This 177-nucleotide RNA was probed chemically with DMS and 2A3. The DMS profile rests on 2,542 reads. Source: RMDB library TTRINS, as collected in RNAgym. For DMS the reverse transcriptase was MarathonRT. For 2A3, 7,174 sequencing reads were counted.
RNA sequence: GGGAACGACUCGAGUAGAGUCGAAAAGAUAUGGAGAACUACCCACCCUUAGCUCCGGUAGAUCGAUGAAAGAAUUCGGAAACGAAUUCUGGAGAUCUACCGGAGUGGGAGGAGGUUCUCCUAAGUCGAUCAUUAGUUACUUCGGUAACUAAUGAUCAAAAGAAACAACAACAACAAC
Reactivity to DMS in 0.01 (KOAc 150mM, MgCl2 10mM, bicine 150mM(pH8.5), 24C), signal-to-noise 3, nucleotides 027 to 126: g020a100u010a240u000g030g000a020g010a010a010c010u010a210c050c000c010a300c080c000c020u000u000a300g000c000u000c000c020g000g010u000a010g000a020u010c000g000a140u040g010a120a160a040g000a030a000u000u000c000g000g000a170a120a200c010g000a000a010u000u000c020u000g000g000a050g010a000u000c000u000a000c000c000g000g010a000g020u000g000g010g000a040g010g010a300g000g000u000u000c010u000c010c000u020a030a060g020u010c120
Reactivity to 2A3 in 0.01 (KOAc 150mM, MgCl2 10mM, bicine 150mM(pH8.5), 24C), signal-to-noise 3, nucleotides 027 to 126: g080a060u270a160u300g010g000a000g010a020a010c010u210a250c020c000c020a170c030c050c000u070u170a010g010c000u000c000c000g000g010u000a010g010a000u020c030g300a300u040g020a030a020a000g000a000a000u020u010c030g020g070a100a010a090c010g000a000a000u000u000c000u000g000g010a000g000a000u010c000u000a000c020c010g000g030a000g000u010g010g110g010a010g000g000a030g000g000u000u000c000u020c000c000u010a070a030g210u140c110